[RMDB]
The record gives the reactivity of an RNA of 177 nucleotides to 2A3 and DMS. The DMS profile rests on 1,743 reads. Reactivities are rounded to 0.1 and cut off at 0 and 3. As a SHAPE reagent, 2A3 marks flexible, mostly unpaired nucleotides at the ribose 2'-OH. For 2A3 the reverse transcriptase was SuperScript II with manganese.
RNA sequence: GGGAACGACUCGAGUAGAGUCGAAAAUGUGUGCUCGAGAGCCUCCCAGUCCGACAGAGCUUUUAGAUCUUCUGAUCUUUCCCUGGAGGAUAUCGCUUAUGCUUCAAGCGAUUCUCGGAAUAAUUAAACGAUGACUGUAUUUCGAUACAGUCAUCGUAAAAGAAACAACAACAACAAC
Reactivity to 2A3 in 0.01 (KOAc 150mM, MgCl2 10mM, bicine 150mM(pH8.5), 24C), signal-to-noise 2, nucleotides 027 to 126: u170g110u010g000u020g080c020u010c020g130a100g000a020g050c020c010u020c000c050c000a020g040u000c010c020g020a030c060a000g100a010g020c000u030u060u040u080a000g010a020u000c000u250u020c150u300g010a020u000c000u000u010u000c030c000c000u030g040g020a010g020g020a060u030a010u080c000g000c030u030u030a080u190g080c030u090u160c080a000a000g000c000g030a000u080u010c030u000c000g030g080a090a050u140a130a080u160u150a150a190
Reactivity to DMS in 0.01 (KOAc 150mM, MgCl2 10mM, bicine 150mM(pH8.5), 24C), signal-to-noise 2, nucleotides 027 to 126: u020g000u000g010u000g000c030u000c000g000a090g010a130g000c060c050u020c040c010c040a210g000u010c010c010g020a170c070a040g010a040g010c290u000u000u000u000a020g010a030u000c000u010u000c300u030g000a030u000c000u010u000u000c020c010c010u000g010g020a120g010g000a070u000a030u000c000g000c000u000u000a070u000g010c180u000u010c090a040a000g030c000g010a020u000u000c030u000c010g010g010a090a070u010a080a110u020u000a090a090